Chemical mapping of a 207-nucleotide RNA with 2A3.
[RMDB]
RNA sequence: GGGAACGACUCGAGUAGAGUCGAAAACGUCACCGCGAGGCCCGUCUUGGAUCACGAUCACAGCACUGGCGCUGUGCGCGGUGUGCUGCACGCUGGGUGCAACUCACUACUGGGCAAGCUAGAGAACAACGCUGCACGCUACGGCGUGCGCAACAUCUCGGUAUGAAGUGUUCGCACUUCAUACCGAAAAAGAAACAACAACAACAAC
Reactivity to 2A3 in 0.01 (KOAc 150mM, MgCl2 10mM, bicine 150mM(pH8.5), 24C), signal-to-noise 1, nucleotides 027 to 156: c000g070u110c030a010c060c000g010c020g000a110g000g000c010c000c010g090u000c030u090u130g090g000a070u120c030a020c180g060a110u120c030a010c040a030g050c040a050c050u210g200g000c070g000c070u070g070u110g040c010g040c010g010g000u040g000u030g000c020u060g000c000a000c020g090c040u000g010g170g000u000g010c020a000a040c020u030c050a020c000u090a000c030u090g010g010g000c040a030a010g010c010u080a010g010a010g010a140a000c090a050a000c160g060c040u140g000c000a010c000g060c070u080a050c170g100g000c010g010u000g000c000g000c000a000a080c040a150u020c070
Source information: Conditions: 150 mM KOAc, 10 mM MgCl2 and 150 mM bicine (pH 8.5), 24 C. For 2A3 the reverse transcriptase was SuperScript II with manganese. It was measured as part of the RMDB library OK3TST.